The record gives the reactivity of an RNA of 207 nucleotides to 2A3 and DMS. The DMS profile rests on 2,733 reads. The data come from the RNA Mapping Database (RMDB), library OK3TST. 2A3 adducts were read by reverse transcription with SuperScript II with manganese. DMS adducts were read by reverse transcription with MarathonRT.

[RMDB]
RNA sequence: GGGAACGACUCGAGUAGAGUCGAAAAGCAGGCCCGUUUACGCUACGUUGCACUUAGCGUGCGGGUUCGGGAAGACCAUUACCGCCAGCUACCUGAUAGGCAUGCACCGCAAACGUGCAGUGGUCUGCGUACCGAACAAGAUGAUCCUCGCGCAGUGCGCGGCUUUGCUUUUCGAAGCAAAGCCGCGAAAAGAAACAACAACAACAAC
Reactivity to 2A3 in 0.01 (KOAc 150mM, MgCl2 10mM, bicine 150mM(pH8.5), 24C), signal-to-noise 2, nucleotides 027 to 156: g080c070a030g080g030c000c010c010g000u080u100u160a050c070g010c010u030a020c050g090u060u080g010c030a050c050u040u070a010g010c000g000u000g020c030g000g000g000u010u000c010g010g020g000a050a010g010a010c000c000a040u070u100a120c000c090g020c010c000a060g050c060u090a140c060c050u150g090a150u150a100g000g000c050a060u030g000c010a020c010c010g010c120a160a150a020c080g000u000g000c000a000g060u020g020g000u000c000u000g000c050g030u030a020c000c040g010a040a030c060a090a050g070a090u150g020a040u070c000c000u020c020g000c010g000c030a010g020u020g050
Reactivity to DMS in 0.01 (KOAc 150mM, MgCl2 10mM, bicine 150mM(pH8.5), 24C), signal-to-noise 1, nucleotides 027 to 156: g010c060a120g020g010c020c020c000g010u000u010u000a040c060g000c000u000a030c160g000u000u010g030c080a210c020u000u000a030g010c030g000u000g040c040g020g000g020u000u030c000g020g030g050a160a090g010a020c030c000a080u000u000a070c000c030g000c050c000a280g000c000u000a020c000c000u040g010a160u000a060g030g020c070a090u000g000c020a130c060c060g020c110a060a100a080c070g000u000g020c000a070g040u000g020g000u000c030u010g000c030g000u000a100c050c010g020a010a100c030a050a170g020a140u000g010a110u010c030c030u000c040g030c020g040c040a080g000u000g010

The RNA was probed in 150 mM KOAc, 10 mM MgCl2 and 150 mM bicine (pH 8.5) at 24 C.